[RMDB]
RNA sequence: GGGAACGACUCGAGUAGAGUCGAAAACGCAUAGGGUUCUGAUAACAAAGAACCUAGAUAGCCGCAUCGGUAUUAUAGGAUGUAGUCGGUGAGCCGGAAUGCCUGCAUCGUAAGCCUAUAAGUAAAUUUAAGUGUAAUCACUUCGGUGAUUACACAAGGGAUACCUUUUGUUCGCAAAAGGUAUCCCAAAAGAAACAACAACAACAAC
Reactivity to 2A3 in 0.01 (KOAc 150mM, MgCl2 10mM, bicine 150mM(pH8.5), 24C), signal-to-noise 1, nucleotides 027 to 156: c030g000c060a060u100a090g020g010g010u070u020c000u000g030a050u070a250a070c090a000a160a000g030a000a130c080c000u010a030g000a130u080a000g030c050c020g020c130a090u180c090g010g000u150a070u160u090a030u040a020g010g010a010u010g040u100a030g050u040c010g020g000u000g020a020g070c000c000g050g110a190a000u070g070c000c020u070g000c000a020u030c020g030u050a050a000g000c000c000u030a030u000a090a100g040u030a040a100a300u130u240u030a180a030g020u000g000u000a000a000u000c000a000c000u000u050c200g120g000u000g000a030u000u000a000c000a000c000a000a000
This 207-nucleotide RNA was probed chemically with 2A3. The 2A3 profile rests on 553 reads. Conditions: 150 mM KOAc, 10 mM MgCl2 and 150 mM bicine (pH 8.5), 24 C. 2A3 adducts were read by reverse transcription with SuperScript II with manganese. The data come from the RNA Mapping Database (RMDB), library M2RFPK.